[RMDB]
RNA sequence: GGGAACGACUCGAGUAGAGUCGAAAAACGAAAACUACGCACUCGCAGCUUAAUAACCUGCGCUGAGCCCGUCUCCCCCAGCUUGCCUGUGUCCUAGGGAAUUGGAAGGUCAUCCUUCACAGGAUCGUCUAGGUAAUCCCUUUCGAGGGAUUACCAACAGAGGUAUCGUAUUCGUACGAUACCUCUGAAAAGAAACAACAACAACAAC
Reactivity to DMS in 0.01 (KOAc 150mM, MgCl2 10mM, bicine 150mM(pH8.5), 24C), signal-to-noise 1, nucleotides 027 to 156: a150c030g000a110a060a090a090c040u000a030c040g020c110a140c070u000c070g060c000a030g060c010u000u000a120a070u000a130a140c240c000u000g000c020g020c080u010g020a080g000c000c080c030g030u000c030u010c000c000c000c020c030a130g040c050u000u010g030c040c000u020g030u000g000u010c020c050u030a160g010g010g000a060a140u000u000g010g000a080a040g000g000u030c050a110u000c000c020u020u010c080a120c060a020g030g030a050u000c060g010u010c040u000a110g020g010u000a000a000u000c000c000c000u030u000u000c240g030a030g030g010g000a030u000u000a000c000c000a020a070
Reactivity to 2A3 in 0.01 (KOAc 150mM, MgCl2 10mM, bicine 150mM(pH8.5), 24C), signal-to-noise 2, nucleotides 027 to 156: a000c090g000a060a040a000a000c120u250a040c050g030c020a010c060u030c020g010c020a000g000c010u080u010a070a020u030a000a150c000c000u040g050c000g040c160u070g040a000g040c040c090c060g060u010c110u110c080c000c010c010c010a000g010c020u060u090g060c010c010u010g040u030g040u040c000c000u030a030g020g000g070a040a120u110u070g080g000a050a030g100g000u070c020a040u060c020c020u030u080c010a000c010a060g030g000a050u040c040g050u000c060u060a060g010g000u000a000a000u000c000c000c010u000u050u020c120g070a010g000g000g000a000u000u000a000c000c020a000a000
The data come from the RNA Mapping Database (RMDB), library M2RFPK. Structure probing data (DMS and 2A3) for a 207-nucleotide construct. The RNA was probed in 150 mM KOAc, 10 mM MgCl2 and 150 mM bicine (pH 8.5) at 24 C. The DMS profile rests on 2,592 reads. DMS (dimethyl sulfate) methylates the pairing face of unpaired adenines and cytosines. 2A3 adducts were read by reverse transcription with SuperScript II with manganese.